[RMDB]
RNA sequence: GGGAACGACUCGAGUAGAGUCGAAAAGAUAUGGACACUUUGAGCAACAGCAUGUCCUUCGGAAACGAAGGCAUGACAUGCUCCAAGUGUCCUAAGUCAAACUUGCGCUUCUUCGGAAGCGCAAGAAGAGUGUUUUACAGUUCGCUGUAAAACACUCAAAAGAAACAACAACAACAAC
Reactivity to DMS in 0.01 (KOAc 150mM, MgCl2 10mM, bicine 150mM(pH8.5), 24C), signal-to-noise 3, nucleotides 027 to 126: g000a010u000a040u010g010g000a010c000a010c000u000u000u000g010a020g010c010a090a110c250a160g000c010a000u000g000u020c000c000u000u010c000g020g010a030a020a030c010g010a030a000g010g010c010a000u010g000a020c070a230u000g000c000u010c010c090a010a010g020u000g010u010c000c000u000a000a050g000u000c020a160a150a240c000u000u000g000c000g010c000u000u000c000u010u020c240g030g000a020a000g000c000g000c000a000a000g000a060a120
Reactivity to 2A3 in 0.01 (KOAc 150mM, MgCl2 10mM, bicine 150mM(pH8.5), 24C), signal-to-noise 3, nucleotides 027 to 126: g010a000u020a010u050g000g000a000c020a000c020u030u000u000g010a020g000c080a110a260c120a300g070c000a060u010g140u300c000c000u000u000c010g000g000a010a000a000c000g000a010a020g050g000c010a000u000g040a010c020a120u300g000c010u000c000c000a010a000g000u000g000u010c000c000u000a010a000g000u000c010a030a060a130c000u010u010g000c000g010c000u030u000c000u020u050c160g120g000a000a000g020c000g000c000a010a000g000a010a000
Source: RMDB library TTRDES, as collected in RNAgym. An RNA of 177 nucleotides, treated with DMS and 2A3 and read out base by base. For 2A3 the reverse transcriptase was SuperScript II with manganese. The reactions ran in a buffer of 150 mM KOAc, 10 mM MgCl2 and 150 mM bicine (pH 8.5), at 24 C. Values cover nucleotides 27 to 126.